[RMDB]
RNA sequence: GGGAACGACUCGAGUAGAGUCGAAAAGAUAUGGAACGGUACAGACAUGCUUUGAGUUCGGAAACGAACUACAAGCAACAGCUGUGACCGUUCCUAAGUCAAACUAUCGUCGUUCGCGACGAUAGAAGCUAUCUUAUUCCUUCGGGAAUAAGAUAGCAAAAGAAACAACAACAACAAC
Reactivity to 2A3 in 0.01 (KOAc 150mM, MgCl2 10mM, bicine 150mM(pH8.5), 24C), signal-to-noise 6, nucleotides 027 to 126: g010a000u040a020u120g010g000a000a010c010g010g000u010a020c010a010g100a050c070a260u300g010c010u040u120u250g030a010g000u000u010c010g000g010a030a040a020c010g000a000a000c010u070a120c010a010a000g010c030a090a020c110a090g040c010u020g000u070g150a040c000c000g000u000u000c000c000u000a000a000g000u000c020a030a070a100c000u010a010u020c000g010u000c000g020u060u090c300g000c010g140a000c000g000a000u000a000g010a030a000
Reactivity to DMS in 0.01 (KOAc 150mM, MgCl2 10mM, bicine 150mM(pH8.5), 24C), signal-to-noise 4, nucleotides 027 to 126: g000a040u000a230u020g010g000a010a010c000g020g000u000a020c010a010g020a070c130a180u010g000c000u000u000u000g010a040g010u000u000c000g000g000a040a040a140c010g020a010a000c000u000a050c090a010a010g010c000a050a070c300a160g010c000u000g000u000g000a040c010c000g010u000u000c000c000u000a010a090g000u000c020a120a130a250c000u000a000u000c000g010u000c000g000u000u020c250g020c010g010a020c010g000a010u000a000g010a100a140
An RNA of 177 nucleotides, treated with 2A3 and DMS and read out base by base. Source: RMDB library TTRDES, as collected in RNAgym. DMS adducts were read by reverse transcription with MarathonRT. Conditions: 150 mM KOAc, 10 mM MgCl2 and 150 mM bicine (pH 8.5), 24 C.